Structure probing data (2A3 and DMS) for a 207-nucleotide construct. DMS adducts were read by reverse transcription with MarathonRT. The data come from the RNA Mapping Database (RMDB), library OK3TST. Conditions: 150 mM KOAc, 10 mM MgCl2 and 150 mM bicine (pH 8.5), 24 C.
[RMDB]
RNA sequence: GGGAACGACUCGAGUAGAGUCGAAAAGUAAUGAAGUCGAAUUUUGACAGGAAUAUACUUGGGAAUAACUUUCCUGUAGAACAGAUUUCUGAGAUUUGGUGUCCCAUUCUUCAUUUCUGGAUGUAGUUUUCAUCUUUACUGUCAAAUAACUGAAUGACUAUUUACCACUCUUCGGAGUGGUAAAUAGAAAAGAAACAACAACAACAAC
Reactivity to 2A3 in 0.01 (KOAc 150mM, MgCl2 10mM, bicine 150mM(pH8.5), 24C), signal-to-noise 5, nucleotides 027 to 156: g090u100a040a100u150g070a050a010g040u060c070g060a070a060u000u030u030u080g010a000c000a000g020g020a040a010u080a010u040a220c010u030u040g000g010g030a030a020u120a100a040c040u040u050u010c000c010u040g070u080a020g010a030a010c010a000g010a020u030u120u110c120u180g010a020g010a080u050u110u140g070g020u120g040u100c050c000c000a010u020u000c010u070u050c000a050u020u050u030c010u010g010g010a010u020g050u060a160g080u130u100u150u110c010a020u000c000u000u020u040a020c010u020g010u000c000a020a010a030u070a070a050c050u080g090a060a070u070g030a020
Reactivity to DMS in 0.01 (KOAc 150mM, MgCl2 10mM, bicine 150mM(pH8.5), 24C), signal-to-noise 3, nucleotides 027 to 156: g000u000a080a070u020g010a110a070g010u000c020g010a100a240u000u010u010u010g010a050c010a000g000g010a050a110u000a180u010a050c050u000u010g030g020g010a090a110u000a140a070c130u000u000u000c000c000u010g020u010a040g020a130a080c060a100g000a090u010u000u000c070u000g010a110g010a090u000u010u000g020g050u000g020u010c040c020c000a140u000u000c010u010u000c130a120u000u000u000c040u000g030g000a050u000g040u010a100g030u010u000u000u000c030a040u000c020u010u000u000a090c030u000g010u010c020a020a020a040u010a050a270c120u000g000a090a160u000g010a230